An RNA of 177 nucleotides, treated with DMS and read out base by base. In probing experiments dimethyl sulfate is read out at A N1 and C N3, which are open when not base-paired. The RNA was probed in 150 mM KOAc, 10 mM MgCl2 and 150 mM bicine (pH 8.5) at 24 C.
RNA sequence: GGGAACGACUCGAGUAGAGUCGAAAAAACCACACAGAGUGUUCAAUUUUCGAAACAUGGUUACGGUUCCAAACUUCUCUGGGCUUUCAAGGAAGUGACAAUAAUGAAUUCACGCUUUGCGUUCUUAAUUAUCGGCCUAUUUCGAUAGGCCGAUAAUAAAAGAAACAACAACAACAAC
Reactivity to DMS in 0.01 (KOAc 150mM, MgCl2 10mM, bicine 150mM(pH8.5), 24C), signal-to-noise 1, nucleotides 027 to 126: a030a030c000c010a190c150a050c070a070g040a080g020u000g030u010u000c110a080a050u000u000u040u000c050g010a190a040a020c060a020u010g010g000u000u010a070c130g000g000u000u000c030c040a070a150a070c030u010u000c010u000c010u000g010g000g030c190u010u000u000c050a010a030g020g000a070a030g010u000g000a090c160a030a070u010a080a100u000g000a040a070u010u000c130a050c020g000c070u010u000u000g010c070g010u000u000c020u000u000a150